The record gives the reactivity of an RNA of 177 nucleotides to DMS and 2A3. For 2A3 the reverse transcriptase was SuperScript II with manganese. The 2A3 profile rests on 916 reads. Source: RMDB library M2PK90, as collected in RNAgym. Reactivities are given for positions 27 through 126. The reactions ran in a buffer of 150 mM KOAc, 10 mM MgCl2 and 150 mM bicine (pH 8.5), at 24 C. DMS adducts were read by reverse transcription with MarathonRT.
RNA sequence: GGGAACGACUCGAGUAGAGUCGAAAAUCUAUCACCAGCCCAUGUUUACGACACGAAUGGGCUGUUCCAAAUUACGUAUAGCUCUUGCAACAUCGUGUCGAAACGUUCCCAAGCUAUACGCCACAAAUGUCGUCCUUUAAUUCGUUAAAGGACGACAAAAAGAAACAACAACAACAAC
Reactivity to DMS in 0.01 (KOAc 150mM, MgCl2 10mM, bicine 150mM(pH8.5), 24C), signal-to-noise 2, nucleotides 027 to 126: u010c140u010a060u020c110a090c300c010a020g100c000c000c000a180u000g000u030u000u000a130c080g000a010c000a000c010g020a030a080u000g000g000g000c000u000g000u000u010c060c000a120a120a050u000u000a060c000g000u000a000u000a000g000c010u010c180u000u000g020c160a070a100c120a020u000c030g010u000g010u000c010g030a080a130a220c050g000u000u010c000c000c010a110a040g010c000u000a010u010a000c000g030c160c140a060c200a040a060a080
Reactivity to 2A3 in 0.01 (KOAc 150mM, MgCl2 10mM, bicine 150mM(pH8.5), 24C), signal-to-noise 1, nucleotides 027 to 126: u020c010u010a190u080c010a000c120c010a010g070c060c000c000a000u000g080u030u160u150a070c020g000a000c000a010c000g000a100a050u020g020g000g070c020u020g000u050u020c000c000a030a010a070u300u110a040c010g040u000a000u020a010g030c010u050c040u130u250g190c150a120a020c010a120u010c000g040u000g000u010c000g000a030a070a010c020g010u000u000c020c000c000a000a000g000c000u000a000u000a050c000g000c030c010a120c000a000a130a000